Record summary
The record gives the reactivity of an RNA of 207 nucleotides to DMS and 2A3. It was measured as part of the RMDB library OK3TST. DMS adducts were read by reverse transcription with MarathonRT. The RNA was probed in 150 mM KOAc, 10 mM MgCl2 and 150 mM bicine (pH 8.5) at 24 C. The 2A3 profile rests on 4,439 reads.
RNA sequence: GGGAACGACUCGAGUAGAGUCGAAAACAGAUUGAGUGAGUUACUUGAGGUCCAAGACUCAAGCUGGAUCUUCUCAUGCCAAGUUGCAUGCUCUUUUUCACUCCAUUAUAGCAAACUCUAAGAAAUCUUAGAAAGUAAGGUAAGUAUGCAUAUAGGAACUGAUACUCGUAUUCGUACGAGUAUCAGUAAAAGAAACAACAACAACAAC
Reactivity to DMS in 0.01 (KOAc 150mM, MgCl2 10mM, bicine 150mM(pH8.5), 24C), signal-to-noise 4, nucleotides 027 to 156: c060a120g020a170u000u010g010a030g020u000g010a060g020u010u000a070c050u000u000g000a060g040g030u010c060c220a140a130g020a110c030u000c030a010a040g010c030u000g010g040a100u000c060u000u020c070u000c010a100u010g000c020c000a060a300g020u010u000g010c020a030u010g010c000u000c010u000u000u000u000u010c110a060c070u010c020c020a200u010u000a070u000a090g020c020a040a050a070c050u010c050u030a020a070g010a160a090a100u000c020u010u000a050g000a060a100a150g010u010a060a070g020g000u000a050a100g010u000a070u000g010c030a080u000a040u000a260g000g010a040
Reactivity to 2A3 in 0.01 (KOAc 150mM, MgCl2 10mM, bicine 150mM(pH8.5), 24C), signal-to-noise 7, nucleotides 027 to 156: c030a010g060a060u060u070g010a010g020u020g010a020g040u050u060a050c090u130u140g030a020g050g010u040c030c020a060a050g050a150c070u080c130a020a030g030c030u000g020g030a030u020c000u150u020c030u080c010a010u030g020c000c010a180a080g100u170u100g020c010a010u010g000c010u030c000u050u100u020u060u040c050a050c030u020c050c010a040u100u120a100u100a100g010c030a030a060a070c000u010c010u040a020a020g030a050a250a140u110c010u020u030a020g030a060a080a020g060u110a050a020g040g030u030a040a040g040u040a050u110g010c050a020u070a020u100a140g100g050a030